[RMDB]
RNA sequence: GGGAACGACUCGAGUAGAGUCGAAAAAACACCCAAGGGUGCUAACGUAGCUCCCCCUGGUCUCUUGUAUCUGUGCUACAGUAAAUCUGAUCUGUACCUCUGCAUUUGGGGAGUCCCUUUCUCUCCUUCCUCCCUGCUUUUUCGAAAGCAGGGAGGAAAAAGAAACAACAACAACAAC
Reactivity to 2A3 in 0.01 (KOAc 150mM, MgCl2 10mM, bicine 150mM(pH8.5), 24C), signal-to-noise 1, nucleotides 027 to 126: a000a080c120a080c000c000c000a000a040g050g000g020u060g000c000u040a090a000c110g170u120a030g000c000u020c000c000c000c000c000u000g000g010u010c010u000c020u050u060g080u070a050u000c020u020g080u050g140c050u110a090c000a030g030u180a060a150a150u170c040u110g030a030u060c000u000g030u030a010c000c000u020c030u030g030c030a200u110u150u140g000g000g000g040a020g010u040c020c000c010u100u070u020c030u000c000u000c020c040u000

The record gives the reactivity of an RNA of 177 nucleotides to 2A3. It was measured as part of the RMDB library RFM100. The RNA was probed in 150 mM KOAc, 10 mM MgCl2 and 150 mM bicine (pH 8.5) at 24 C. 2A3 adducts were read by reverse transcription with SuperScript II with manganese.